[RMDB]
RNA sequence: GGGAACGACUCGAGUAGAGUCGAAAAGGGAGUACACUAGGCCUGGGGAGUCAGCAGGGCUCGGAAGUUUAGGGUUCAUUUACGGUCUUCCCGUUUGUUUGAUUGCUCUCUCCCUGUCCUAUGCUGACGUUGGUCAUGAUUUCGAUCAUGACCAACGAAAAGAAACAACAACAACAAC
Reactivity to 2A3 in 0.01 (KOAc 150mM, MgCl2 10mM, bicine 150mM(pH8.5), 24C), signal-to-noise 2, nucleotides 027 to 126: g010g020g010a000g040u090a050c020a000c130u040a010g050g020c010c030u010g010g010g020g030a070g000u010c010a000g020c010a020g020g020g000c050u020c040g050g210a170a030g010u050u060u120a030g010g010g000u040u030c010a080u120u100u130a010c030g030g070u050c080u100u080c060c010c000g010u060u020u130g090u000u030u100g120a140u060u220g040c010u000c000u000c000u030c010c000c000u020g010u070c000c000u110a150u080g010c000u000g010a010
Reactivity to DMS in 0.01 (KOAc 150mM, MgCl2 10mM, bicine 150mM(pH8.5), 24C), signal-to-noise 2, nucleotides 027 to 126: g010g000g000a050g030u000a040c210a070c020u000a110g000g000c020c070u000g020g010g010g010a160g000u000c020a020g050c030a170g010g010g010c000u000c100g010g020a090a070g010u000u010u000a050g010g000g010u000u000c040a030u000u000u000a070c050g000g000u020c190u010u000c200c000c000g010u000u010u010g000u000u010u000g000a050u010u010g020c030u010c010u000c020u000c000c000c000u010g010u010c010c000u020a040u020g020c020u000g000a090